The data come from the RNA Mapping Database (RMDB), library OK3TST. Chemical mapping of a 207-nucleotide RNA with DMS and 2A3. Values cover nucleotides 27 to 156. The 2A3 profile rests on 23,457 reads.

[RMDB]
RNA sequence: GGGAACGACUCGAGUAGAGUCGAAAAACACUUUGCUUACAACCACAACCACGCUAUGUGAACGCACGCAUAGCAUAGCGAAUUCGGUUGCAUCAGUGUAGGGUAGGGUAUCGUGGUCAUUUCACUGCGCAAUGCGUUCUUGCUAUGCGGUGAUCAGCUACACUAUAGGAUUCGUCCUAUAGUGUAGAAAAGAAACAACAACAACAAC
Reactivity to DMS in 0.01 (KOAc 150mM, MgCl2 10mM, bicine 150mM(pH8.5), 24C), signal-to-noise 7, nucleotides 027 to 156: a060c050a050c040u000u000u000g010c060u000u000a070c040a060a080c030c040a150c070a060a060c020c030a120c010g010c000u000a010u010g010u000g010a130a110c070g030c080a100c100g000c040a030u000a300g010c000a020u000a010g000c000g010a090a140u000u000c080g010g030u010u000g020c020a100u000c060a060g020u000g020u000a070g020g010g030u000a090g010g000g000u010a060u010c060g020u000g010g010u000c040a120u000u000u000c020a050c020u000g010c040g000c050a040a060u000g010c020g010u000u000c030u000u000g010c020u000a150u000g030c010g020g030u000g000a100u000c090a150g000
Reactivity to 2A3 in 0.01 (KOAc 150mM, MgCl2 10mM, bicine 150mM(pH8.5), 24C), signal-to-noise 9, nucleotides 027 to 156: a000c060a020c040u080u070u110g040c040u150u190a080c050a100a060c060c040a050c040a070a010c010c010a040c020g000c000u000a010u010g010u010g010a020a010c010g020c040a030c050g170c090a190u250a150g000c000a000u000a010g000c010g050a110a120u190u160c100g010g000u000u030g000c000a030u070c050a020g020u020g020u070a050g020g040g060u080a080g040g010g030u080a080u190c090g040u070g030g040u040c030a030u040u080u040c010a010c000u020g000c010g000c020a010a020u060g010c010g010u020u020c010u030u030g020c030u080a080u290g000c010g020g000u010g020a030u040c030a010g040